Chemical mapping of a 177-nucleotide RNA with DMS.
RNA sequence: GGGAACGACUCGAGUAGAGUCGAAAAGAUAUGGAAGACACUGAGGUACAGUAUUAGACAUCGAUCUGAGGCAUCGGAAACGAUGCUCAGGGAGUCUGGGUACUGUACCUCAGUGUCUUCCUAAGUCGUAUAUAGAUUGGUUCGCCAAUCUAUAUACAAAAGAAACAACAACAACAAC
Reactivity to DMS in 0.01 (KOAc 150mM, MgCl2 10mM, bicine 150mM(pH8.5), 24C), signal-to-noise 4, nucleotides 027 to 126: g010a120u010a300u000g010g000a020a010g010a020c000a010c000u000g000a000g010g020u000a000c000a020g010u000a010u000u000a040g000a020c000a300u010c210g000a060u010c000u000g000a090g020g020c010a010u000c000g020g000a100a110a220c000g010a000u000g000c000u000c020a000g000g000g010a020g010u000c000u000g010g020g010u000a000c000u000g010u000a000c000c000u010c000a010g010u000g010u000c000u000u000c000c000u000a010a070g010u010c100

For DMS, 8,896 sequencing reads were counted.
The data come from the RNA Mapping Database (RMDB), library TTRINS.